[RMDB]
RNA sequence: GGGAACGACUCGAGUAGAGUCGAAAAGACGCCUGUGUGGCGAAGCGAGCAUGAGAUGGAGCCGCAAGAGAAGAUGAGAUAGAAGCGGCAAGAUAGCUUGCUCGCAAAAAGAUCCAUCUCACAGAGACAUCCGGUACGCAUUCGUGCGUACCGGAUGAAAAGAAACAACAACAACAAC
Reactivity to DMS in 0.01 (KOAc 150mM, MgCl2 10mM, bicine 150mM(pH8.5), 24C), signal-to-noise 1, nucleotides 027 to 126: g040a230c000g000c000c000u050g000u000g000u130g000g070c000g000a200a240g000c000g000a020g130c090a000u070g000a070g000a000u000g030g000a300g000c000c000g000c070a080a010g000a230g000a150a150g090a270u000g000a010g000a050u050a200g040a270a080g000c000g080g100c000a000a080g070a000u000a040g000c000u000u000g050c000u010c000g000c000a000a000a130a170a050g050a210u000c050c110a030u000c000u000c010a050c080a180g000a090g000a130
Reactivity to 2A3 in 0.01 (KOAc 150mM, MgCl2 10mM, bicine 150mM(pH8.5), 24C), signal-to-noise 2, nucleotides 027 to 126: g110a020c010g060c010c000u100g200u180g080u280g110g000c000g000a030a010g000c000g000a000g000c020a020u030g000a070g000a100u030g010g010a000g000c000c000g000c030a040a000g070a000g040a170a030g040a110u300g050a070g010a120u190a110g020a170a000g000c000g010g010c000a020a030g040a000u050a010g020c000u000u000g010c040u000c000g040c090a000a000a000a040a000g060a020u000c030c020a040u000c010u010c000a100c000a070g030a020g000a060

The record gives the reactivity of an RNA of 177 nucleotides to DMS and 2A3.
For DMS the reverse transcriptase was MarathonRT.
The DMS profile rests on 832 reads.
The 2A3 profile rests on 1,010 reads.
The reactions ran in a buffer of 150 mM KOAc, 10 mM MgCl2 and 150 mM bicine (pH 8.5), at 24 C.
Reactivities are rounded to 0.1 and cut off at 0 and 3.